The record gives the reactivity of an RNA of 177 nucleotides to 2A3.
RNA sequence: GGGAACGACUCGAGUAGAGUCGAAAAGCAGUUGACUUCGGUCAACUGCAAAUAAAGCUCAAGACGUGCACAGGGAGGAACGUCUUGAGCAACCCAAUAAAUAAACAUGUAAGUUCGCUUACAUGAACCGCAUACCGUGGUUCGCCACGGUAUGCGGAAAAGAAACAACAACAACAAC
Reactivity to 2A3 in 0.01 (KOAc 150mM, MgCl2 10mM, bicine 150mM(pH8.5), 24C), signal-to-noise 1, nucleotides 027 to 126: g000c000a000g000u000u000g020a030c050u040u080c230g160g000u000c010a030a010c000u010g000c000a000a000a000u000a000a010a000g020c010u000c020a000a010g010a000c000g000u040g050c060a030c090a300g180g150g060a130g020g020a080a010c000g010u000c000u010u000g000a000g000c010a000a000c000c000c030a000a020u150a070a040a010u160a000a060a000c000a000u000g000u010a000a020g020u010u040c300g000c100u000u000a010c000a010u000g020a020a020

For 2A3 the reverse transcriptase was SuperScript II with manganese.